[RMDB]
RNA sequence: GGGAACGACUCGAGUAGAGUCGAAAAAAGUUCUACAAAGAAGUUAGAGCUUACCUAGGAAUCUCUUCUGCUUGUGACGGUCUUGCUUCAGCUUAUAGGGCGAAUUCCUUUGAUGUACCUACAUUCUCACCCAGUUUAAGUUCGCUUAAACUGGGUGAAAAGAAACAACAACAACAAC
Reactivity to 2A3 in 0.01 (KOAc 150mM, MgCl2 10mM, bicine 150mM(pH8.5), 24C), signal-to-noise 1, nucleotides 027 to 126: a010a000g030u000u000c010u020a000c020a000a270a020g130a090a000g080u090u040a000g020a010g010c000u020u010a020c000c000u000a020g020g150a100a090u070c020u010c010u100u010c000u020g030c000u060u070g040u040g070a080c030g020g000u000c060u050u110g030c010u050u050c010a030g010c010u010u100a130u140a080g010g060g010c000g010a020a040u050u060c000c000u050u030u080g080a070u080g040u100a060c000c000u020a050c040a090u080u010c000u020